[RMDB]
RNA sequence: GGGAACGACUCGAGUAGAGUCGAAAACAAACAGGAAGCAAAGCGAUGGGUCGUUUCAGCUGCAGAAGUUGACGUGCUCACUGCAGCAUCGAUUUCUCACCCGAAAGACCAUGACGAUUGCAGAGAAGGCUACGCAUCCUUUCGAGGAUGCGUAGCCAAAAGAAACAACAACAACAAC
Reactivity to 2A3 in 0.01 (KOAc 150mM, MgCl2 10mM, bicine 150mM(pH8.5), 24C), signal-to-noise 1, nucleotides 027 to 126: c020a000a190a010c010a000g160g000a080a000g000c000a090a000a000g180c000g050a020u100g080g000g100u080c090g000u010u000u030c070a070g000c060u020g000c030a020g000a070a000g090u020u010g130a010c130g160u130g000c000u000c000a140c000u040g060c000a000g000c000a120u040c060g010a010u000u000u000c030u000c000a020c010c010c000g000a010a020a020g030a080c080c030a000u150g060a000c000g100a110u000u000g100c080a000g000a000g010a280a000
Annotation
This 177-nucleotide RNA was probed chemically with 2A3. Values cover nucleotides 27 to 126. The reactions ran in a buffer of 150 mM KOAc, 10 mM MgCl2 and 150 mM bicine (pH 8.5), at 24 C.